[RMDB]
RNA sequence: GGGAACGACUCGAGUAGAGUCGAAAAAUUUGCCAGUGAUAUGAUGACAUUGUCACAAAGAUCACAAGGGACACAGAGUUGACUUUUGCUCAAGGUGGAACGGCAAAGCUCUAUAGACAAGAUGAGACACGAAAUAGUUGUUCGCAACUAUUUCGUGAAAAGAAACAACAACAACAAC
Reactivity to DMS in 0.01 (KOAc 150mM, MgCl2 10mM, bicine 150mM(pH8.5), 24C), signal-to-noise 2, nucleotides 027 to 126: a150u000u000u020g010c020c000a170g010u000g000a000u000a060u020g000a100u000g000a030c010a160u000u000g020u000c000a050c030a040a070a110g020a030u000c020a040c010a170a080g010g010g020a300c030a020c030a070g000a060g020u000u000g000a100c100u000u000u000u000g020c040u000c030a080a080g000g030u000g000g020a140a090c080g000g030c040a000a030a060g000c030u000c030u010a150u000a110g000a100c190a060a070g000a050u010g000a080g050a270
Reactivity to 2A3 in 0.01 (KOAc 150mM, MgCl2 10mM, bicine 150mM(pH8.5), 24C), signal-to-noise 2, nucleotides 027 to 126: a000u030u050u050g020c010c010a010g000u000g000a010u000a000u070g190a150u030g010a030c120a300u180u300g020u000c000a000c020a030a080a010g120a020u020c000a000c020a050a030g000g070g020a020c030a000c020a040g050a000g050u020u080g200a260c080u090u110u130u250g010c010u020c020a080a040g150g000u010g010g020a010a010c010g000g000c000a040a000a000g010c000u000c010u040a180u050a140g080a080c060a100a010g040a090u120g030a010g010a070